[RMDB]
RNA sequence: GGGAACGACUCGAGUAGAGUCGAAAAGCGACGUGCGCAGACACGGUUCGCCAACGCGCCGAUCCGCUGGCUGCAUGCCGACAUCAUGACGGCUGAGCUGCCCAACGCGGGCUUCGACGCCGUGGUCUGUAGGAAAGAGGUUCGCCUCUUUCCUACAAAAAGAAACAACAACAACAAC
Reactivity to 2A3 in 0.01 (KOAc 150mM, MgCl2 10mM, bicine 150mM(pH8.5), 24C), signal-to-noise 9, nucleotides 027 to 126: g080c030g060a040c020g060u110g020c080g020c160a040g080a070c010a000c020g080g070u100u100c010g010c000c010a110a070c050g030c020g000c030c030g010a020u040c010c010g010c060u020g010g000c010u020g020c010a030u140g000c010c010g060a100c020a130u280c060a090u250g080a030c000g000g000c010u040g060a050g030c020u020g010c030c010c020a060a050c120g040c030g020g040g000c080u050u030c010g020a030c020g010c030c030g010u030g030g060u050c070
Reactivity to DMS in 0.01 (KOAc 150mM, MgCl2 10mM, bicine 150mM(pH8.5), 24C), signal-to-noise 8, nucleotides 027 to 126: g010c030g010a080c060g000u000g010c040g020c140a100g010a130c020a020c010g010g020u020u020c040g010c030c080a130a100c140g000c030g010c040c020g010a040u060c010c010g000c060u000g000g020c010u010g000c020a130u020g000c010c010g010a140c040a100u040c190a120u040g000a120c000g000g000c000u020g010a240g010c020u010g000c030c000c280a090a090c180g020c050g000g010g010c090u010u010c010g000a140c080g000c020c070g030u010g000g010u020c100

Conditions: 150 mM KOAc, 10 mM MgCl2 and 150 mM bicine (pH 8.5), 24 C. An RNA of 177 nucleotides, treated with 2A3 and DMS and read out base by base. For 2A3, 12,736 sequencing reads were counted. For 2A3 the reverse transcriptase was SuperScript II with manganese. Source: RMDB library OK1LIB, as collected in RNAgym.